[RMDB]
RNA sequence: GGGAACGACUCGAGUAGAGUCGAAAAAUGUGACGUGGUGAUCCACACCGCUGGAGUGGUAGACGUGUGGGGACGCGUAGACGAAAACUUGCUGUACGAUAUUAACGUGGAAGGUACGCGUUCCGUCAUAGACGCGUGCGUGGCCGCGGGUACGCGGGCACCAGUCAUAAUUCGUUAUGACUGGUGCAAAAGAAACAACAACAACAAC
Reactivity to 2A3 in 0.01 (KOAc 150mM, MgCl2 10mM, bicine 150mM(pH8.5), 24C), signal-to-noise 9, nucleotides 027 to 156: a010u140g030u060g050a010c030g010u040g030g040u080g090a100u040c010c010a020c010a010c040c040g020c060u070g060g080a130g050u120g030g040u080a050g010a070c040g010u020g010u030g020g000g010g010a010c010g000c010g010u020a040g060a100c100g030a030a040a020a050c040u090u140g020c050u100g040u070a020c040g050a100u050a080u230u200a150a050c040g000u030g020g030a030a030g060g010u010a000c000g010c010g010u060u010c030c000g010u040c010a030u060a140g030a020c010g000c000g010u010g020c080g060u090g050g020c000c000g000c010g000g010g040u060a030c030g000c010g010g020
Reactivity to DMS in 0.01 (KOAc 150mM, MgCl2 10mM, bicine 150mM(pH8.5), 24C), signal-to-noise 3, nucleotides 027 to 156: a080u010g030u000g000a030c020g030u000g000g010u000g020a140u000c040c010a030c020a040c020c010g030c030u010g000g020a190g030u000g010g030u000a100g010a060c030g020u000g010u000g010g000g010g000a060c010g030c030g020u000a080g010a120c080g010a090a090a080a070c090u000u000g030c000u000g020u000a090c060g000a200u000a080u010u000a080a090c040g040u010g010g010a270a090g020g030u000a010c010g030c010g020u000u000c010c020g030u010c070a070u000a050g010a040c010g000c010g020u000g010c000g030u010g020g010c000c010g030c010g030g000g000u000a030c030g020c030g030g030
Background:
Chemical mapping of a 207-nucleotide RNA with 2A3 and DMS. The RNA was probed in 150 mM KOAc, 10 mM MgCl2 and 150 mM bicine (pH 8.5) at 24 C. The 2A3 profile rests on 16,571 reads.